[RMDB]
RNA sequence: GGGAACGACUCGAGUAGAGUCGAAAAUCCUAAGUCAUUUGUCAGUCUUUCUGUGAGGCAUCGAUCUAGGUCGGAAACGACCUAGGGAGCCUCACGAAGGACUUGGAUUUAAUGAUAUGGAAAAACCGUCUCAGAACGUUCGCGUUCUGAGACGGAACCUCCCAUUUACGUUCGCGUAAAUGGGAGGAAAAGAAACAACAACAACAAC
Reactivity to 2A3 in 0.01 (KOAc 150mM, MgCl2 10mM, bicine 150mM(pH8.5), 24C), signal-to-noise 1, nucleotides 027 to 156: u020c020c000u030a070a000g030u000c000a010u000u000u070g020u050c000a000g000u010c010u010u020u000c060u300g010u010g000a000g000g000c040a160u270c060g050a040u030c010u010a000g010g000u000c010g000g060a090a110a170c010g000a000c000c020u000a000g010g000g000a010g000c040c000u000c000a000c000g000a000a000g000g020a000c000u000u020g000g000a000u260u090u260a020a010u010g000a000u030a110u160g040g050a080a050a060a000a040c000c000g010u000c000u000c000a010g000a010a010c000g030u140u140c190g020c000g080u000u000c020u000g000a000g010a000c010g000g000a000a000

The record gives the reactivity of an RNA of 207 nucleotides to 2A3. For 2A3, 1,066 sequencing reads were counted. Reactivities are given for positions 27 through 156. The RNA was probed in 150 mM KOAc, 10 mM MgCl2 and 150 mM bicine (pH 8.5) at 24 C. Values are in units of 0.01, from 0 to 300, in steps of 10.